[RMDB]
Structure probing data (2A3) for a 207-nucleotide construct. 2A3 adducts were read by reverse transcription with SuperScript II with manganese. The data come from the RNA Mapping Database (RMDB), library OK3TST.

RNA sequence: GGGAACGACUCGAGUAGAGUCGAAAAGGGGGGCCUGGUUCAUCUGGGGCCAAAGGUGAGAGUGGUGAUCCAGGUCCUCAGGUAAAAAAUAAAAAUUUGACUUUUUAUUCUUGACUGGCUUCUUUGAUACAGCAUAAUUCCUUCGAGAAUGCAUCAACGUAUUGUGUAAGUUCGCUUACACAAUACGAAAAGAAACAACAACAACAAC
Reactivity to 2A3 in 0.01 (KOAc 150mM, MgCl2 10mM, bicine 150mM(pH8.5), 24C), signal-to-noise 3, nucleotides 027 to 156: g020g000g010g000g000g000c010c000u000g000g000u000u000c000a000u010c000u060g010g010g130g060c040c060a130a050a020g080g020u140g010a100g030a070g020u120g000g000u000g000a000u000c000c000a000g000g010u010c000c000u000c000a000g000g000u030a010a130a070a040a090a070u110a080a060a050a050a060u170u120u210g010a030c020u020u100u060u150u080a030u170u070c040u050u050g050a080c040u050g020g060c020u060u070c020u130u140u040g050a070u150a140c040a020g010c000a000u060a100a090u170u060c080c000u030u070c030g070a110g020a100a030u100g010c030a050u040c000a040a060
For 2A3, 1,145 sequencing reads were counted.